[RMDB]
RNA sequence: GGGAACGACUCGAGUAGAGUCGAAAACGAGGCCUUGUCUGUCUCCGAUCCGAAGGCCGCUUUGCCCACCUCCCCAGUUGCCUCGGGAGCUCCGAGCUCGGUCCCCUCUGCCCGCUGGAGACGGCCGCAGUGGGAUCGACUUCGGUCGAUCCCACUGAAAAGAAACAACAACAACAAC
Reactivity to DMS in 0.01 (KOAc 150mM, MgCl2 10mM, bicine 150mM(pH8.5), 24C), signal-to-noise 1, nucleotides 027 to 126: c100g000a150g000g000c010c050u020u020g020u050c020u020g000u050c030u010c040c050g040a100u020c060c070g060a080a060g000g030c000c050g000c030u000u040u000g010c020c040c030a200c090c020u000c050c000c020c080a040g000u000u000g000c040c020u030c050g000g000g000a050g030c100u010c020c020g010a110g050c040u000c000g000g000u020c060c040c000c060u000c000u030g000c020c030c060g010c080u030g060g060a070g060a110c130g020g000c030c110g030
Reactivity to 2A3 in 0.01 (KOAc 150mM, MgCl2 10mM, bicine 150mM(pH8.5), 24C), signal-to-noise 1, nucleotides 027 to 126: c040g000a090g000g040c000c000u060u050g060u030c040u020g050u000c010u020c020c060g010a060u010c030c050g050a040a000g000g010c000c010g000c060u080u070u110g050c000c030c000a030c020c020u010c000c000c010c020a040g050u080u080g040c000c020u010c010g010g000g000a060g000c040u020c000c020g050a040g000c010u040c060g000g050u000c000c000c000c020u020c000u000g000c000c020c000g000c030u050g050g000a010g000a060c070g000g030c050c000g070